[RMDB]
RNA sequence: GGGAACGACUCGAGUAGAGUCGAAAAGUUAUCGAAUGCGAAGGUUUGGAAAACCACGUCCGCAUCGACCACGGUUUGGGUGGUCCGAGCGAGCAGGACCUUUGGGUUAGUAUUCGACCAGAGGAUAGAGUAUCAUAGCAUUCGUGCUAUGAUACUCAAAAGAAACAACAACAACAAC
Reactivity to 2A3 in 0.01 (KOAc 150mM, MgCl2 10mM, bicine 150mM(pH8.5), 24C), signal-to-noise 9, nucleotides 027 to 126: g110u110u110a080u090c010g010a020a010u050g010c020g060a100a090g080g040u070u080u150g220g070a090a090a040a030c020c030a050c080g050u040c020c010g000c060a220u010c000g010a000c010c000a010c030g110g070u200u260u250g230g050g000u020g000g000u000c020c090g020a020g000c020g010a020g020c020a110g050g040a040c000c000u070u080u150g140g010g000u020u010a030g010u030a090u030u050c020g020a010c030c010a040g010a040g100g060a060u170a200
Reactivity to DMS in 0.01 (KOAc 150mM, MgCl2 10mM, bicine 150mM(pH8.5), 24C), signal-to-noise 5, nucleotides 027 to 126: g020u000u020a130u010c020g020a030a020u000g020c000g020a100a100g000g000u000u000u040g010g000a110a030a040a060c000c010a170c090g010u010c020c000g000c000a080u010c080g000a060c010c010a000c000g020g010u040u040u040g020g030g010u000g000g000u000c030c080g010a040g000c010g000a070g010c020a170g000g010a040c000c010u000u010u010g010g000g030u010u010a150g010u000a040u000u000c010g010a040c050c030a090g000a090g010g000a070u010a080
Overview
The record gives the reactivity of an RNA of 177 nucleotides to 2A3 and DMS. The data come from the RNA Mapping Database (RMDB), library OK1LIB. For 2A3 the reverse transcriptase was SuperScript II with manganese. The DMS profile rests on 13,183 reads.